This 207-nucleotide RNA was probed chemically with 2A3 and DMS.
RNA sequence: GGGAACGACUCGAGUAGAGUCGAAAAUUCUCAGCACUCAUCAAGAAGUAGGCUUAGGCCAAUUGCUUGGUGGUGAAAGUAGAGGGAAGGUAGCACUUCGACGCCUCUAAGUACGCUGUCGGAGUAGAAAACUGGACAUCGUUCGCGAUGUCCAGAAGUACAACUACAGCUUCGGCUGUAGUUGUACAAAAGAAACAACAACAACAAC
Reactivity to 2A3 in 0.01 (KOAc 150mM, MgCl2 10mM, bicine 150mM(pH8.5), 24C), signal-to-noise 2, nucleotides 027 to 156: u050u000c000u010c000a000g040c020a030c030u110c030a010u000c000a010a000g000a090a020g050u120a050g010g030c010u100u070a080g200g000c000c010a060a090u030u060g040c010u000u000g000g000u030g030g000u000g020a080a080a020g070u140a010g050a070g050g050g010a020a090g130g020u240a060g160c060a000c020u000u000c010g020a010c000g050c010c020u040c030u060a090a130g080u110a010c050g020c080u130g020u010c000g000g040a000g040u090a060g060a000a120a020a020c000u020g010g000a000c000a000u020c000g010u000u110c160g010c020g050a000u000g000u000c000c000a010g000a000a000
Reactivity to DMS in 0.01 (KOAc 150mM, MgCl2 10mM, bicine 150mM(pH8.5), 24C), signal-to-noise 1, nucleotides 027 to 156: u000u000c010u000c020a150g090c050a040c010u100c030a010u000c030a010a010g000a000a040g020u000a140g040g010c010u000u010a180g070g030c000c000a080a100u000u000g000c020u000u010g030g060u000g000g000u000g010a070a050a120g010u000a100g010a030g010g000g010a070a050g000g010u010a140g000c090a110c020u000u000c010g010a030c000g000c000c000u000c020u000a060a210g000u000a030c020g020c030u010g050u000c000g000g010a030g010u010a110g000a050a050a120a160c000u000g000g010a000c030a000u000c010g020u000u000c300g040c040g030a000u000g000u000c000c010a010g020a020a110
The 2A3 profile rests on 1,082 reads. For DMS the reverse transcriptase was MarathonRT. The reactions ran in a buffer of 150 mM KOAc, 10 mM MgCl2 and 150 mM bicine (pH 8.5), at 24 C.